Description
The record gives the reactivity of an RNA of 177 nucleotides to 2A3 and DMS. The RNA was probed in 150 mM KOAc, 10 mM MgCl2 and 150 mM bicine (pH 8.5) at 24 C.

RNA sequence: GGGAACGACUCGAGUAGAGUCGAAAAUAAACGACUAUUUUGACGAGGUGGAUGGUAGAGAAGGUUUAGCUAAAUAUACCAUACAUGAAUUAAUGGAAUGGGUUAAUUCUCAUCCAGACGACUAAAACUUUAUACUAUACUUCGGUAUAGUAUAAAGAAAAGAAACAACAACAACAAC
Reactivity to 2A3 in 0.01 (KOAc 150mM, MgCl2 10mM, bicine 150mM(pH8.5), 24C), signal-to-noise 8, nucleotides 027 to 126: u140a020a100a010c060g110a040c080u120a130u130u140u070u170g150a090c060g040a040g060g050u040g040g000a040u020g020g020u090a060g020a030g040a180a060g040g010u080u160u150a050g010c020u080a070a100a050u160a040u020a050c010c010a020u030a040c020a050u120g110a210a090u150u200a100a050u050g020g070a110a110u010g040g000g000u020u100a050a030u300u010c000u000c010a000u000c000c010a020g050a040c060g020a050c040u110a060a060a000a020
Reactivity to DMS in 0.01 (KOAc 150mM, MgCl2 10mM, bicine 150mM(pH8.5), 24C), signal-to-noise 5, nucleotides 027 to 126: u030a060a090a120c100g010a110c100u010a040u010u010u010u010g000a110c040g010a090g000g040u000g000g010a030u000g000g010u010a050g010a060g010a110a110g000g010u020u030u040a090g020c080u000a050a080a110u030a110u020a070c020c030a040u010a020c030a030u010g010a080a060u030u010a070a070u030g000g010a050a020u010g000g000g000u000u020a040a080u030u000c000u020c010a060u000c000c010a030g000a070c170g010a080c080u000a030a090a060a110